Conditions: 150 mM KOAc, 10 mM MgCl2 and 150 mM bicine (pH 8.5), 24 C. This 177-nucleotide RNA was probed chemically with DMS. DMS adducts were read by reverse transcription with MarathonRT.
RNA sequence: GGGAACGACUCGAGUAGAGUCGAAAACAUUAGUGGAGGCAGGCUUAGUAGGUGUUUUAACACUUGAUAAUCAAGAUUUAUAUGGUCAAUGGUAUGACUUUGGAGAUUUUGUCAAGACAGUACCUGGGCAAAGUGUAGGGUUCGCCCUACACUUUGCAAAAGAAACAACAACAACAAC
Reactivity to DMS in 0.01 (KOAc 150mM, MgCl2 10mM, bicine 150mM(pH8.5), 24C), signal-to-noise 1, nucleotides 027 to 126: c030a110u000u010a090g030u010g010g030a080g030g000c050a010g010g010c030u000u000a060g000u000a070g000g020u000g000u000u000u000u000a080a040c110a150c020u000u000g010a050u020a100a040u000c070a040a050g020a110u000u000u010a140u010a080u040g030g030u010c010a040a090u000g000g010u010a100u000g010a000c020u010u000u010g000g000a130g000a060u020u010u000u000g000u000c030a030a090g000a060c180a070g000u000a090c060c040u010g010g010
Description:
The data come from the RNA Mapping Database (RMDB), library OK2TST.